Chemical mapping of a 177-nucleotide RNA with 2A3 and DMS. Source: RMDB library OK2TST, as collected in RNAgym.

[RMDB]
RNA sequence: GGGAACGACUCGAGUAGAGUCGAAAAGCUGACAAUGAACACCCAACCCAGCAUCAGGAAGCUCAGGUAACUACGCACGUCACUGGCGAUACGUACCCCUUUUUGCAGACCGCAAGCGACGCAAAUGCUCUCUAGUAGGAUUCGUCCUACUAGAGAGAAAAGAAACAACAACAACAAC
Reactivity to 2A3 in 0.01 (KOAc 150mM, MgCl2 10mM, bicine 150mM(pH8.5), 24C), signal-to-noise 7, nucleotides 027 to 126: g030c030u030g040a040c060a060a210u160g030a070a020c030a040c050c010c000a020a040c010c000c010a010g030c000a070u060c030a040g070g030a060a020g010c030u030c050a020g010g050u030a050a040c040u060a030c060g000c040a030c030g020u000c030a030c170u070g030g000c010g050a070u030a110c040g030u050a050c000c000c010c020u020u080u010u040u090g000c010a010g010a040c000c010g010c040a030a030g010c020g030a020c020g000c020a020a020a070u130g020
Reactivity to DMS in 0.01 (KOAc 150mM, MgCl2 10mM, bicine 150mM(pH8.5), 24C), signal-to-noise 8, nucleotides 027 to 126: g020c050u000g000a070c100a090a080u000g010a090a100c090a110c020c010c020a090a110c040c030c020a080g000c030a050u000c070a070g010g000a090a070g010c050u000c070a050g000g010u010a030a070c090u000a050c090g000c050a050c060g000u000c050a070c080u000g000g000c020g010a070u000a060c070g010u000a100c060c010c010c070u010u010u000u000u000g010c020a040g000a230c300c020g010c120a040a080g010c030g010a220c090g010c070a020a050a050u010g010